An RNA of 207 nucleotides, treated with DMS and 2A3 and read out base by base. Source: RMDB library M2RFPK, as collected in RNAgym. 2A3 adducts were read by reverse transcription with SuperScript II with manganese. The reactions ran in a buffer of 150 mM KOAc, 10 mM MgCl2 and 150 mM bicine (pH 8.5), at 24 C. For 2A3, 5,835 sequencing reads were counted.
[RMDB]
RNA sequence: GGGAACGACUCGAGUAGAGUCGAAAAAGGCACUCCAUACCCUACUCCGACUCAAUACGUCCCCGUCGUACAGAAUGGUAACAUAUCUCUCCAAAUAUCUGAGCUUGGGUAUACGAGGAAACCCAACAAAAGCAAUUGUGGUUCGCCACAAUUGCAACAUCUUUAGUGUCUUCGGACACUAAAGAUGAAAAGAAACAACAACAACAAC
Reactivity to DMS in 0.01 (KOAc 150mM, MgCl2 10mM, bicine 150mM(pH8.5), 24C), signal-to-noise 2, nucleotides 027 to 156: a080g010g020c050a100c020u010c030c080a230u000a060c020c000c010u000a100c060u000c020c040g020a040c020u000c020a140a090u000a120c020g010u000c010c050c000c010g040u000c060g000u010a180c050a070g020a140a050u000g020g000u010a040a100c070a100u000a050u000c020u000c020u000c020c040a020a150a070u000a060u000c050u000g000a070g010c060u000u000g000g010g020u000a000u000a060c090g020a070g010g020a070a110a070c010c000c030a060a140c060a040a060a110a150g000c000a010a020u000u030g040u000g000g010u000u000c300g040c040c000a020c000a000a030u000u000g010c000a000a050
Reactivity to 2A3 in 0.01 (KOAc 150mM, MgCl2 10mM, bicine 150mM(pH8.5), 24C), signal-to-noise 7, nucleotides 027 to 156: a000g080g000c050a030c040u040c040c010a040u080a080c000c000c000u020a020c020u020c020c030g040a030c010u040c070a070a110u120a190c040g080u050c020c030c010c030g080u070c020g010u050a050c030a070g090a100a090u050g060g000u100a120a020c030a080u140a140u060c070u010c000u010c070c020a090a120a100u130a090u050c060u050g020a030g090c090u050u040g020g000g020u040a030u000a060c050g000a010g030g010a050a040a000c000c010c000a010a020c020a010a110a000a010g000c000a000a000u000u010g000u000g020g040u030u060c130g040c050c000a000c000a000a000u000u000g010c000a000a000